[RMDB]
RNA sequence: GGGAACGACUCGAGUAGAGUCGAAAACGCAUCAUUCGACAAAAGCCAAGACGACGCUAUGGCGUUAACCGGUCUGAUGAUCUUGGAGGACCUGGGUGUGGAUCAACCACUACUCGACUUGAUCGAGAUCACGUUCCGUGUUCGCACGGAACGUGAUAAAAGAAACAACAACAACAAC
Reactivity to 2A3 in 0.01 (KOAc 150mM, MgCl2 10mM, bicine 150mM(pH8.5), 24C), signal-to-noise 1, nucleotides 027 to 126: c060g000c040a070u030c020a000u130u120c060g050a030c100a030a110a010a000g030c000c000a080a030g100a050c090g020a030c010g000c070u050a090u250g170g040c010g010u060u070a030a020c040c000g030g010u000c020u000g080a070u030g030a010u050c040u070u140g080g010a050g060g000a020c000c050u100g000g000g060u040g000u020g060g010a080u090c040a050a110c000c020a020c020u090a020c010u000c000g020a030c030u070u130g030a110u110c020g000a020g010
Reactivity to DMS in 0.01 (KOAc 150mM, MgCl2 10mM, bicine 150mM(pH8.5), 24C), signal-to-noise 2, nucleotides 027 to 126: c070g020c080a060u000c130a100u000u000c060g000a070c080a100a050a170a090g030c060c020a090a070g000a190c120g050a050c100g020c020u010a090u020g020g020c000g040u000u000a010a040c100c070g000g000u000c080u000g010a130u020g010a070u000c080u000u000g000g030a160g000g000a050c040c040u000g070g000g050u000g000u000g030g010a100u000c160a080a120c030c040a050c070u020a080c020u000c000g010a020c010u020u000g020a090u000c000g000a050g020
Overview:
Source: RMDB library OK2TST, as collected in RNAgym. An RNA of 177 nucleotides, treated with 2A3 and DMS and read out base by base. For DMS, 944 sequencing reads were counted. The reactions ran in a buffer of 150 mM KOAc, 10 mM MgCl2 and 150 mM bicine (pH 8.5), at 24 C.